[RMDB]
RNA sequence: GGGAACGACUCGAGUAGAGUCGAAAAGCUACCGAAACCCAAACGCGACUAUGGCCGCCUUAGCCCGUGGGGCCGGCUGGCCGAGUGGCGGCGCCAGUACGACACUGUCAUCGACAAGCUCAUCGAACUGAACUAAGUACUUCGGUACUUAGUUCAGAAAAGAAACAACAACAACAAC
Reactivity to 2A3 in 0.01 (KOAc 150mM, MgCl2 10mM, bicine 150mM(pH8.5), 24C), signal-to-noise 9, nucleotides 027 to 126: g020c030u060a060c030c030g060a140a060a060c000c020c000a060a090a030c020g010c020g110a020c020u080a220u300g010g000c000c010g010c000c010u150u230a020g000c010c000c040g280u220g040g060g000g000c000c000g000g000c100u180g000g000c000c000g010a000g000u020g080g000c000g010g030c020g020c010c010a050g020u110a040c040g040a020c060a010c070u060g010u070c020a060u040c030g040a040c020a090a030g010c010u030c040a100u080c060g030a050a050
Reactivity to DMS in 0.01 (KOAc 150mM, MgCl2 10mM, bicine 150mM(pH8.5), 24C), signal-to-noise 4, nucleotides 027 to 126: g010c050u000a100c080c040g000a110a100a050c010c020c020a090a110a110c070g030c020g020a020c030u020a070u030g000g000c000c000g010c000c010u000u050a140g000c010c000c010g050u020g050g030g040g080c020c110g000g000c000u060g040g010c020c010g000a020g010u000g010g000c000g010g000c080g000c020c020a050g000u010a080c060g010a090c070a080c030u000g000u000c040a090u010c020g010a070c100a080a080g010c020u010c070a090u010c030g010a110a210

The record gives the reactivity of an RNA of 177 nucleotides to 2A3 and DMS. DMS adducts were read by reverse transcription with MarathonRT. The DMS profile rests on 7,779 reads.